[RMDB]
RNA sequence: GGGAACGACUCGAGUAGAGUCGAAAAAAGGCGAAAUGAAGGCAGACCAAAGAAACUCACAGAGAGGAUGGGUAUGCUCUCUUCACUUUUGAACAAGAGAUGAGAGAUGCUUCACCUGCCCCUAGAAACCAGUUAUGCAGUUCGCUGCAUAACUGGUAAAAGAAACAACAACAACAAC
Reactivity to 2A3 in 0.01 (KOAc 150mM, MgCl2 10mM, bicine 150mM(pH8.5), 24C), signal-to-noise 1, nucleotides 027 to 126: a000a020g060g000c080g030a110a070a090u160g030a110a000g030g020c000a020g050a060c030c000a020a150a000g080a030a120a020c010u010c000a090c120a030g130a010g020a010g180g020a100u060g000g080g020u030a020u190g010c000u030c000u000c000u040u050c020a010c020u040u000u020u300g080a130a060c040a020a030g000a010g000a050u030g000a020g000a000g000a040u100g000c030u120u100c020a020c030c020u040g020c000c010c000c010u030a050g160a080a110
Reactivity to DMS in 0.01 (KOAc 150mM, MgCl2 10mM, bicine 150mM(pH8.5), 24C), signal-to-noise 2, nucleotides 027 to 126: a090a100g000g000c050g000a060a080a070u010g010a190a100g030g010c010a050g020a100c030c010a040a080a110g000a100a080a080c050u010c040a060c110a070g000a060g010a070g000g020a100u000g010g000g000u000a040u000g010c000u000c010u000c000u000u000c000a020c000u000u010u000u030g020a140a120c210a000a020g000a080g010a010u000g000a020g000a000g000a070u010g010c000u020u000c100a080c040c010u000g000c040c000c000c080u000a090g000a100a060
An RNA of 177 nucleotides, treated with 2A3 and DMS and read out base by base.
High DMS reactivity at an A or C suggests that its Watson-Crick edge is free.
Conditions: 150 mM KOAc, 10 mM MgCl2 and 150 mM bicine (pH 8.5), 24 C.
For DMS the reverse transcriptase was MarathonRT.